An RNA of 177 nucleotides, treated with 2A3 and DMS and read out base by base. Conditions: 150 mM KOAc, 10 mM MgCl2 and 150 mM bicine (pH 8.5), 24 C. For 2A3, 2,360 sequencing reads were counted. 2A3 is a SHAPE reagent: it acylates the 2'-hydroxyl of flexible nucleotides of all four kinds.
[RMDB]
RNA sequence: GGGAACGACUCGAGUAGAGUCGAAAAAAAGAGGGCUUAUGAGGCUGUGAAACCCAGAGCUCUUAACGCUGUGACCAAAGAUGGAAGUUCUCUAUAGGAAGCCAUAGCACUCCUAAUGUUUGGUGCUUUAGAAAAUUCUUUUCGAAGAAUUUUCUAAAAAAGAAACAACAACAACAAC
Reactivity to 2A3 in 0.01 (KOAc 150mM, MgCl2 10mM, bicine 150mM(pH8.5), 24C), signal-to-noise 4, nucleotides 027 to 126: a000a000a000g070a010g000g000g000c030u050u040a150u300g050a140g050g000c040u030g040u030g180a160a060a020c010c010c000a010g010a000g030c010u000c000u020u010a060a020c070g020c040u060g050u110g110a030c030c000a060a110a010g040a030u130g000g040a030a100g040u080u030c030u000c030u060a080u080a140g080g030a070a000g040c010c020a050u060a030g000c020a020c040u030c010c010u080a150a090u120g050u030u030u080g030g010u050g030c010u020
Reactivity to DMS in 0.01 (KOAc 150mM, MgCl2 10mM, bicine 150mM(pH8.5), 24C), signal-to-noise 2, nucleotides 027 to 126: a040a060a090g000a030g010g020g000c010u000u000a070u010g010a100g050g020c020u000g030u030g000a140a110a140c020c000c020a030g000a050g000c010u000c010u010u010a090a050c110g010c010u010g010u000g010a070c020c020a040a060a080g010a050u020g000g000a100a150g010u030u020c050u000c010u010a100u010a130g040g020a210a090g000c040c030a070u000a020g010c030a070c080u000c010c030u000a070a030u010g010u000u020u020g010g010u010g000c080u010